[RMDB]
RNA sequence: GGGAACGACUCGAGUAGAGUCGAAAAUCUCGAGUAAUAGCCAUAAAACUAUGCUAACCCUAAUAAGGCUCCGCCGGUACCAACGGGGUACUACUCCGAUACUGCAAUACCCGCGUUGAGAUCAUCAAGAGUAGUGAAAAAGUUAUCCACUAGGGCACGUUUUAUUUUAUUUCGAUAAAAUAAAACGAAAAGAAACAACAACAACAAC
Reactivity to 2A3 in 0.01 (KOAc 150mM, MgCl2 10mM, bicine 150mM(pH8.5), 24C), signal-to-noise 4, nucleotides 027 to 156: u030c010u000c000g020a020g000u110a080a180u030a080g000c020c020a080u190a110a150a060a050c050u050a060u140g010c020u060a090a100c020c000c010u080a120a080u110a140a090g030g020c020u000c010c020g050c020c030g020g010u040a100c130c070a030a020c010g000g000g000g020u040a120c020u020a000c000u000c010c030g060a070u090a220c040u100g030c010a040a020u020a090c010c000c050g080c010g040u050u030g040a040g010a080u120c040a000u030c070a130a010g020a010g040u050a010g020u030g110a120a060a010a010a000g050u070u090a030u100c050c030a020c070u100a030g000g020g010c030a000
Reactivity to DMS in 0.01 (KOAc 150mM, MgCl2 10mM, bicine 150mM(pH8.5), 24C), signal-to-noise 2, nucleotides 027 to 156: u010c010u010c010g010a150g060u000a100a070u010a050g000c010c040a270u020a120a090a110a100c040u000a020u000g000c050u000a080a100c000c020c010u000a040a110u000a090a150g000g000c020u000c030c010g000c200c080g030g030u000a080c030c020a080a070c000g020g010g040g030u000a030c060u000a030c010u000c020c030g010a170u010a070c060u010g000c020a050a100u000a010c030c020c040g030c100g050u000u000g020a050g010a080u000c050a050u000c070a080a060g000a060g010u000a030g030u020g010a060a020a070a090a150g010u010u000a040u010c010c070a050c030u010a050g010g040g020c040a090